Source: RMDB library OK2TST, as collected in RNAgym. Structure probing data (2A3 and DMS) for a 177-nucleotide construct. In probing experiments dimethyl sulfate is read out at A N1 and C N3, which are open when not base-paired. For 2A3 the reverse transcriptase was SuperScript II with manganese. For DMS the reverse transcriptase was MarathonRT.
RNA sequence: GGGAACGACUCGAGUAGAGUCGAAAACAAGGGUGUUAAAAGGUUGACUGUUGAACACGGUCAGAGUUUCAUCCGCCGGUGCUGGGAGUGGGUCACUGGUUGUACGAGGAAAGUGGCUGUCAGCUGGCCACGUACAUAUCUUCGGAUAUGUACGUGGAAAAGAAACAACAACAACAAC
Reactivity to 2A3 in 0.01 (KOAc 150mM, MgCl2 10mM, bicine 150mM(pH8.5), 24C), signal-to-noise 3, nucleotides 027 to 126: c060a050a080g060g020g020u070g040u140u150a070a050a020a060g100g060u050u030g010a020c020u020g050u060u110g100a130a020c030a010c070g000g020u040c030a000g020a030g060u090u140u090c020a020u010c000c030g000c000c030g070g040u070g020c020u080g040g000g010a100g050u100g020g040g010u030c020a000c050u010g030g060u110u120g070u060a050c080g020a060g040g100a140a060a000g020u020g020g000c030u020g100u100c020a030g030c030u030g050g000
Reactivity to DMS in 0.01 (KOAc 150mM, MgCl2 10mM, bicine 150mM(pH8.5), 24C), signal-to-noise 5, nucleotides 027 to 126: c130a100a110g000g010g020u000g010u010u000a050a050a080a080g020g010u000u000g010a020c000u000g010u010u000g000a110a300c180a080c010g010g000u010c010a030g000a100g000u000u000u000c030a040u000c030c020g020c070c050g010g020u000g010c060u000g000g010g010a100g030u000g010g010g000u000c040a050c060u000g000g010u010u010g010u010a070c160g000a110g010g000a040a080a080g010u000g010g000c040u010g000u010c060a080g010c050u010g000g010
Background
The reactions ran in a buffer of 150 mM KOAc, 10 mM MgCl2 and 150 mM bicine (pH 8.5), at 24 C.